Background
The record gives the reactivity of an RNA of 207 nucleotides to 2A3. Conditions: 150 mM KOAc, 10 mM MgCl2 and 150 mM bicine (pH 8.5), 24 C. The 2A3 profile rests on 532 reads. Values cover nucleotides 27 to 156. For 2A3 the reverse transcriptase was SuperScript II with manganese.

RNA sequence: GGGAACGACUCGAGUAGAGUCGAAAAUUUCUUCCACUCACCCACUGCUCGAGAAUCUCUUCCCUUCCCUCGCGCCUCUUCUUCGAUUCGGAUCGGCUCAUCUCGACAAGAGGCGGCGGUCCUCAGUGCUCUUACUCUUUUCUGUAAAGAGGAGACUAGCUGAAAAUAUGUUCGCAUAUUUUCAGCUAAAAGAAACAACAACAACAAC
Reactivity to 2A3 in 0.01 (KOAc 150mM, MgCl2 10mM, bicine 150mM(pH8.5), 24C), signal-to-noise 1, nucleotides 027 to 156: u150u140u060c060u040u010c010c020a070c030u030c050a130c010c110c000a070c100u020g010c010u010c010g020a060g140a300a300u040c010u030c030u010u050c000c000c000u010u040c050c000c010u020c010g040c000g000c000c000u090c000u110u100c000u060u070c050g050a070u000u080c150g090g090a090u050c020g050g070c050u040c030a070u020c010u010c010g010a000c000a070a010g000a000g020g000c000g050g030c040g040g020u090c060c010u050c040a050g010u040g030c010u000c000u000u050a200c000u060c000u000u220u050u060c020u090g180u120a030a030a020g010a010g000g000a000g040a050c040u040